Chemical mapping of a 177-nucleotide RNA with 2A3 and DMS.
The RNA was probed in 150 mM KOAc, 10 mM MgCl2 and 150 mM bicine (pH 8.5) at 24 C.
For DMS the reverse transcriptase was MarathonRT.
Source: RMDB libraries RFM100 and RFMREP, as collected in RNAgym.
[RMDB]
RNA sequence: GGGAACGACUCGAGUAGAGUCGAAAAUAAGCAAAAUACUUGCAUUAGGUCCCAGCUGGGCUGUGCAUCAGGCAGUUUGGGAAAUAUUCAAUUCUCAGCGGAAGCCAGAAUUUGAAUUCUCUCAUCUACAAUAAGACUUUUUCGAAAGUCUUAUUGUAAAAGAAACAACAACAACAAC
Reactivity to 2A3 in 0.01 (KOAc 150mM, MgCl2 10mM, bicine 150mM(pH8.5), 24C), signal-to-noise 9, nucleotides 027 to 126: u090a020a010g010c020a030a020a060a090u260a190c090u020u020g000c010a170u050u120a070g080g040u020c000c010c000a010g000c010u020g000g130g060c010u030g030u130g130c080a160u200c010a150g040g000c000a000g000u170u250u100g020g000g010a020a060a010u150a020u000u010c000a000a010u010u000c030u010c050a020g010c010g080g120a110a020g000c020c020a010g030a010a010u090u080u110g010a010a010u070u010c020u000c010u010c030a130u030c030u020
Reactivity to DMS in 0.01 (KOAc 150mM, MgCl2 10mM, bicine 150mM(pH8.5), 24C), signal-to-noise 5, nucleotides 027 to 126: u010a060a080g000c010a030a020a190a140u020a140c180u010u010g010c010a090u010u020a070g010g010u000c010c000c010a060g010c030u010g010g010g030c010u000g000u020g020c220a120u010c020a020g010g000c010a020g000u010u010u000g010g000g000a020a050a040u020a040u000u000c010a010a010u000u000c000u000c270a140g020c000g010g080a150a120g010c000c300a020g000a020a010u000u010u020g010a020a020u000u000c120u010c020u000c070a070u010c130u000